[RMDB]
RNA sequence: GGGAACGACUCGAGUAGAGUCGAAAAGGUUCGCACUUCGGUGCGAACCAAAGGCUAAGCAAAAAAUAUCAGCUUGUUCGCUAAGCCACUAACGAGCAGAAAAAACCGUUUGGUUCGCCAAACGGAAGAUAUUUUAUAUGUUCGCAUAUAAAAUAUCAAAAGAAACAACAACAACAAC
Reactivity to DMS in 0.01 (KOAc 150mM, MgCl2 10mM, bicine 150mM(pH8.5), 24C), signal-to-noise 3, nucleotides 027 to 126: g000g000u010u010c010g010c000a000c000u010u010c180g020g000u000g020c010g010a000a000c000c000a000a040a050g000g010c050u000a080a110g030c080a000a010a080a060a070a080u010a070u000c080a100g010c050u000u000g000u010u000c090g010c020u000a070a060g020c020c030a100c100u010a050a060c020g010a030g010c020a160g020a000a060a090a090a120a070c000c010g010u000u000u000g010g010u000u000c180g030c010c000a000a000a000c000g010g010a010a040
Reactivity to 2A3 in 0.01 (KOAc 150mM, MgCl2 10mM, bicine 150mM(pH8.5), 24C), signal-to-noise 3, nucleotides 027 to 126: g020g000u010u000c000g030c020a000c020u020u080c250g100g000u000g020c000g010a000a000c000c000a010a000a000g000g000c030u110a040a070g050c070a060a090a050a050a080a100u190a100u140c040a020g020c000u020u040g010u060u030c020g000c040u050a060a010g000c000c010a020c030u030a020a020c010g020a020g000c040a030g190a080a150a010a010a010a030c000c010g010u000u000u020g060g010u020u060c160g000c050c000a000a000a000c000g000g000a010a000